[RMDB]
Structure probing data (DMS and 2A3) for a 207-nucleotide construct.
The data come from the RNA Mapping Database (RMDB), library OK3TST.
The reactions ran in a buffer of 150 mM KOAc, 10 mM MgCl2 and 150 mM bicine (pH 8.5), at 24 C.
Values cover nucleotides 27 to 156.
For DMS, 12,872 sequencing reads were counted.
RNA sequence: GGGAACGACUCGAGUAGAGUCGAAAAGCUUACCACCGGUAUUUCUUCGGACCCACUCGUUACAAGUAUCUUAACGGUGUCGAUGAGGUGUUCAUUCAUUUUGGUAACAACCCUGCUCCCACUCCCGCUGAGAUGGCCGACCUCAGUGCACACGUGCAAAGAGGGAGGUAUUCGUACCUCCCUCUUUAAAAGAAACAACAACAACAAC
Reactivity to DMS in 0.01 (KOAc 150mM, MgCl2 10mM, bicine 150mM(pH8.5), 24C), signal-to-noise 4, nucleotides 027 to 156: g020c060u000u000a090c030c010a120c070c040g030g030u000a070u000u000u000c030u000u000c040g010g020a150c040c020c060a070c050u010c030g010u010u000a100c080a080a120g030u000a050u000c070u000u010a060a090c050g010g010u010g020u000c040g030a140u000g010a050g040g040u010g010u000u010c070a090u000u000c060a160u000u010u000u020g020g020u010a040a080c050a050a100c020c020c020u000g030c040u000c020c020c010a090c080u000c020c010c030g020c020u010g000a080g020a070u000g020g020c050c020g020a070c080c020u000c030a050g010u000g020c020a070c050a070c090g010u010g030c110
Reactivity to 2A3 in 0.01 (KOAc 150mM, MgCl2 10mM, bicine 150mM(pH8.5), 24C), signal-to-noise 4, nucleotides 027 to 156: g000c020u030u060a060c010c000a060c010c050g040g020u090a100u070u090u040c050u040u080c040g090g010a080c020c020c020a030c030u180c040g020u040u020a070c050a110a130g070u020a100u090c070u070u110a060a020c040g050g010u010g070u100c020g040a060u050g010a020g030g030u050g050u040u070c060a100u100u000c030a080u030u050u140u130g050g020u030a020a010c010a010a060c010c000c000u020g030c000u020c000c010c000a050c050u050c020c030c020g010c020u030g010a030g000a080u070g050g000c020c000g060a030c000c000u000c000a000g050u060g060c030a010c010a010c060g300u130g050c140